[RMDB]
RNA sequence: GGGAACGACUCGAGUAGAGUCGAAAAAGCGCUAGAGAUGUACACGGGUUUUCCCCCUUAUCUGUGUACUAUCUCUGUUUAGACCUGAGGGAUAGGUUGAGUGGGGGAGGUUUGGAAGGGGCGCGAAGUGUAUUUAAAUUUUCGAAUUUAAAUACACAAAAGAAACAACAACAACAAC
Reactivity to DMS in 0.01 (KOAc 150mM, MgCl2 10mM, bicine 150mM(pH8.5), 24C), signal-to-noise 6, nucleotides 027 to 126: a090g000c080g010c080u030a020g010a010g000a010u010g010u000a000c000a010c010g000g000g000u000u000u010u010c010c000c000c010c040u010u020a010u000c010u010g000u000g000u000a000c000u050a010u000c000u000c000u000g020u010u020u010a060g000a120c030c030u010g000a160g010g010g010a200u040a060g000g010u020u010g010a110g010u040g000g000g000g000g000a080g010g000u020u020u020g000g010a120a100g010g000g000g010c090g010c070g000a030a080
Reactivity to 2A3 in 0.01 (KOAc 150mM, MgCl2 10mM, bicine 150mM(pH8.5), 24C), signal-to-noise 4, nucleotides 027 to 126: a000g060c040g000c020u050a010g000a000g000a000u000g000u000a000c000a000c000g000g000g000u010u010u040u080c000c010c000c000c000u000u030a010u010c000u000g010u000g000u000a000c010u010a010u000c000u000c000u000g010u000u060u020a040g030a060c000c000u000g030a070g040g000g010a040u040a040g020g000u010u060g030a050g020u070g010g000g000g000g030a010g000g030u070u090u070g020g000a070a010g000g000g000g000c050g000c020g050a110a020

Overview: Structure probing data (DMS and 2A3) for a 177-nucleotide construct. The 2A3 profile rests on 6,178 reads. Values cover nucleotides 27 to 126.